Source: RMDB library OK1LIB, as collected in RNAgym. The record gives the reactivity of an RNA of 177 nucleotides to 2A3 and DMS. The reactions ran in a buffer of 150 mM KOAc, 10 mM MgCl2 and 150 mM bicine (pH 8.5), at 24 C.
RNA sequence: GGGAACGACUCGAGUAGAGUCGAAAACUUCAAAUAGUAGCAGAUAAAUAUCCAAAAUUAAAUACAAAAGAGAUUAGACGUCAUCUAGCCAGAUGUGGUGUGAAGGAAGAGCAUGUUUCAAGGAGUGAAUACUAAUCGGCUUCGGCCGAUUAGUAUUAAAAGAAACAACAACAACAAC
Reactivity to 2A3 in 0.01 (KOAc 150mM, MgCl2 10mM, bicine 150mM(pH8.5), 24C), signal-to-noise 2, nucleotides 027 to 126: c010u080u090c040a000a080a090u150a100g060u050a000g000c130a000g100a280u050a130a060a020u180a140u230c010c000a040a000a210a180u190u090a150a110a050u250a100c080a020a040a040a050g060a000g000a000u070u070a030g020a080c000g020u060c000a090u010c000u020a000g080c000c060a000g040a060u040g000u050g000g010u040g040u060g120a110a000g000g000a000a000g000a000g040c040a030u130g160u000u010u000c100a070a230g000g030a140g060u160g000
Reactivity to DMS in 0.01 (KOAc 150mM, MgCl2 10mM, bicine 150mM(pH8.5), 24C), signal-to-noise 2, nucleotides 027 to 126: c040u000u030c070a060a050a080u000a070g010u000a040g020c080a080g010a090u020a060a070a100u010a080u010c060c020a040a010a050a130u040u010a060a070a080u040a060c080a070a030a070a110g050a070g000a050u020u000a100g010a060c060g000u010c060a080u010c020u000a070g010c100c060a060g000a090u000g010u000g000g000u000g000u000g000a100a040g000g000a030a050g040a060g000c060a050u010g000u010u000u000c040a060a080g000g010a060g000u000g020
For 2A3 the reverse transcriptase was SuperScript II with manganese.
The DMS profile rests on 2,646 reads.